[RMDB]
RNA sequence: GGGAACGACUCGAGUAGAGUCGAAAAUAUCUAACUACCUGCUCUGUGAUAGGCAUGAAGCCAAGAGGCACUUUCACUCUCGCUAUUAAGUACAUUUUGACCUCUAAGAAACUUAUUGUAGUUUACAGUGUACCCAGAUCUUCGGAUCUGGGUACACAAAAGAAACAACAACAACAAC
Reactivity to 2A3 in 0.01 (KOAc 150mM, MgCl2 10mM, bicine 150mM(pH8.5), 24C), signal-to-noise 1, nucleotides 027 to 126: u040a000u000c070u070a030a020c000u010a090c010c010u020g110c020u000c000u000g130u070g080a140u170a180g030g010c020a020u060g100a130a020g050c000c080a090a050g020a120g000g000c000a000c000u060u040u040c020a000c030u000c000u000c010g030c000u000a000u190u090a260a000g060u120a030c000a170u130u130u030u030g090a110c000c010u000c000u040a060a050g030a140a180a000c020u070u150a070u070u170g050u020a020g000u000u000u000a070c030a000
Structure probing data (2A3) for a 177-nucleotide construct. It was measured as part of the RMDB library RFM100. The 2A3 profile rests on 472 reads. For 2A3 the reverse transcriptase was SuperScript II with manganese.